[RMDB]
RNA sequence: GGGAACGACUCGAGUAGAGUCGAAAACCAUAACAGUUCGCUGUUAUGGACUGUCGGAAUGCGGAAUAAUUAAUCGUCGGCUUACGAUUAAUACCGACUAUAAAGCGUAACACUUCGGUGUUACGAACACUUACUGUCAAUUCGUUGACAGUAAGUGAAAAGAAACAACAACAACAAC
Reactivity to 2A3 in 0.01 (KOAc 150mM, MgCl2 10mM, bicine 150mM(pH8.5), 24C), signal-to-noise 9, nucleotides 027 to 126: c000c000a000u010a010a000c000a000g050u070u090c150g070c120u010g000u000u000a000u010g000g040a060c050u050g020u020c010g020g090a170a110u190g110c080g080g140a090a080u210a140a020u070u020a010a010u010c010g050u010c060g140g120c110u110u160a010c000g010a010u010u010a010a000u020a060c000c000g020a000c010u030a060u060a190a100a020g090c010g000u000a000a000c000a000c010u030u070c200g060g000u000g000u000u010a000c000g000a030a010
Reactivity to DMS in 0.01 (KOAc 150mM, MgCl2 10mM, bicine 150mM(pH8.5), 24C), signal-to-noise 9, nucleotides 027 to 126: c000c000a000u000a000a010c000a010g030u000u010c240g020c000u000g000u000u000a000u000g000g010a120c110u000g010u000c010g000g010a150a110u010g020c120g010g000a100a080u010a100a030u000u000a010a010u000c010g010u010c220g020g010c210u010u010a050c010g010a010u000u000a010a010u000a190c000c000g000a020c020u010a110u000a070a070a130g000c010g010u000a000a010c000a010c000u000u010c190g010g010u000g000u000u000a000c000g000a050a120
Chemical mapping of a 177-nucleotide RNA with 2A3 and DMS. Source: RMDB library M2PK50, as collected in RNAgym. Conditions: 150 mM KOAc, 10 mM MgCl2 and 150 mM bicine (pH 8.5), 24 C. For 2A3, 41,849 sequencing reads were counted. Values cover nucleotides 27 to 126. For DMS the reverse transcriptase was MarathonRT.